[RMDB]
RNA sequence: GGGAACGACUCGAGUAGAGUCGAAAACACGUACUCAAAAUGGCCCGCCAGAUGGAUUGGCAGCAACACAAGUGUCUAAUGAUGUUACCAGUUUAAUGAAAGUUAAUCCGUUCAAUUUAGGUGUCGACACUACCAGGCACUUCGGUGCCUGGUAGUGAAAAGAAACAACAACAACAAC
Reactivity to DMS in 0.01 (KOAc 150mM, MgCl2 10mM, bicine 150mM(pH8.5), 24C), signal-to-noise 1, nucleotides 027 to 126: c090a090c110g010u000a010c120u010c120a050a040a150a100u000g010g030c020c010c040g030c120c080a110g040a010u010g000g010a030u000u000g000g030c000a030g010c060a060a070c030a030c120a080a130g010u000g030u010c100u010a080a220u010g000a150u010g000u000u000a020c030c010a030g000u000u000u000a090a080u000g000a050a040a110g000u000u030a020a050u010c040c060g030u000u010c080a020a080u010u020u010a080g030g010u010g000u000c040g000a240
Reactivity to 2A3 in 0.01 (KOAc 150mM, MgCl2 10mM, bicine 150mM(pH8.5), 24C), signal-to-noise 1, nucleotides 027 to 126: c000a000c010g090u120a030c050u030c120a000a080a060a300u130g040g010c000c000c010g070c030c000a020g160a140u060g050g050a020u020u130g000g000c000a000g060c000a010a140c050a000c030a180a060g050u050g040u050c030u090a140a090u120g060a020u090g040u130u000a120c090c000a060g000u000u140u140a080a130u090g150a210a020a000g000u030u030a040a020u060c000c000g000u040u100c010a080a100u120u250u260a060g010g000u020g050u010c020g050a020

An RNA of 177 nucleotides, treated with DMS and 2A3 and read out base by base. It was measured as part of the RMDB library OK2TRN. For DMS, 717 sequencing reads were counted. Conditions: 150 mM KOAc, 10 mM MgCl2 and 150 mM bicine (pH 8.5), 24 C. For 2A3 the reverse transcriptase was SuperScript II with manganese. For DMS the reverse transcriptase was MarathonRT.